This 177-nucleotide RNA was probed chemically with DMS and 2A3. The RNA was probed in 150 mM KOAc, 10 mM MgCl2 and 150 mM bicine (pH 8.5) at 24 C. Source: RMDB library TTRDEL, as collected in RNAgym. For DMS the reverse transcriptase was MarathonRT. The 2A3 profile rests on 2,857 reads.
[RMDB]
RNA sequence: GGGAACGACUCGAGUAGAGUCGAAAAGAUAUGGAUAAGGUCCCGAGCCCACACUAUUCGGAAACGAACGAAUGUGGGAACUACUCGAAGUCCUUAUCCUAAGUCAAAACGUGGCUUCGGCCACGAACAAAUUGAGGGAGUUCGCUCCCUCAAUUUGAAAAGAAACAACAACAACAAC
Reactivity to DMS in 0.01 (KOAc 150mM, MgCl2 10mM, bicine 150mM(pH8.5), 24C), signal-to-noise 3, nucleotides 027 to 126: g000a050u000a300u010g010g000a010u000a000a020g000g010u010c000c160c000g000a030g030c000c000c000a010c000a010c080u010a270u000u000c000g000g010a160a130a220c020g000a000a000c140g010a050a040u000g000u000g000g010g000a030a000c040u010a300c010u000c030g010a070a300g000u010c000c000u000u010a010u000c000c000u020a010a070g000u010c040a070a050a060a140c020g030u010g000g010c000u000u010c150g020g000c000c000a010c000g000a040a160
Reactivity to 2A3 in 0.01 (KOAc 150mM, MgCl2 10mM, bicine 150mM(pH8.5), 24C), signal-to-noise 2, nucleotides 027 to 126: g020a030u120a020u140g000g010a000u010a000a020g030g020u000c040c040c000g020a010g020c010c010c000a000c000a000c040u100a040u040u010c020g040g060a130a100a100c020g040a060a000c070g090a300a300u030g000u000g000g000g060a030a000c010u230a070c000u030c000g050a110a040g040u040c000c000u010u020a010u020c000c000u020a090a010g080u020c000a030a010a070a170c000g010u000g020g000c000u080u070c300g200g000c000c000a000c000g000a030a020